[RMDB]
RNA sequence: GGGAACGACUCGAGUAGAGUCGAAAAAAUAGUGGCGCUAUUGGCCUGAACUUAUGGAUCACUCCAUCACAUACCAACCACCAAGGCAGAUUUGUUUUCCUUUGUAUUGUUCUGUCGCCAGAACUCACACGCGAACAAAGUUCGCUUUGUUCGCGUGAAAAGAAACAACAACAACAAC
Reactivity to 2A3 in 0.01 (KOAc 150mM, MgCl2 10mM, bicine 150mM(pH8.5), 24C), signal-to-noise 2, nucleotides 027 to 126: a010a000u130a000g060u030g070g000c000g040c120u040a040u080u170g070g020c000c030u020g000a010a000c010u090u080a050u110g030g000a040u090c020a020c070u000c020c010a030u040c020a030c010a060u070a070c010c000a000a080c000c010a020c050c030a060a030g040g000c020a010g030a120u060u060u100g050u000u070u010u100c030c000u100u130u080g140u100a220u060u080g030u060u000c030u020g100u060c040g080c080c000a030g020a050a000c010u010c020a060
Reactivity to DMS in 0.01 (KOAc 150mM, MgCl2 10mM, bicine 150mM(pH8.5), 24C), signal-to-noise 4, nucleotides 027 to 126: a060a080u000a060g010u000g000g020c060g020c080u000a040u000u010g020g010c020c020u000g000a060a090c120u000u000a060u010g000g010a060u000c110a080c100u000c010c020a060u000c130a060c070a070u000a080c080c030a080a080c100c020a050c040c040a030a070g000g020c050a080g020a100u000u000u000g020u000u000u010u010c020c020u010u000u020g010u010a130u000u010g010u010u000c020u000g000u010c200g000c200c020a130g010a030a030c030u010c180a230
This 177-nucleotide RNA was probed chemically with 2A3 and DMS. The reactions ran in a buffer of 150 mM KOAc, 10 mM MgCl2 and 150 mM bicine (pH 8.5), at 24 C. It was measured as part of the RMDB library OK2TST. 2A3 adducts were read by reverse transcription with SuperScript II with manganese.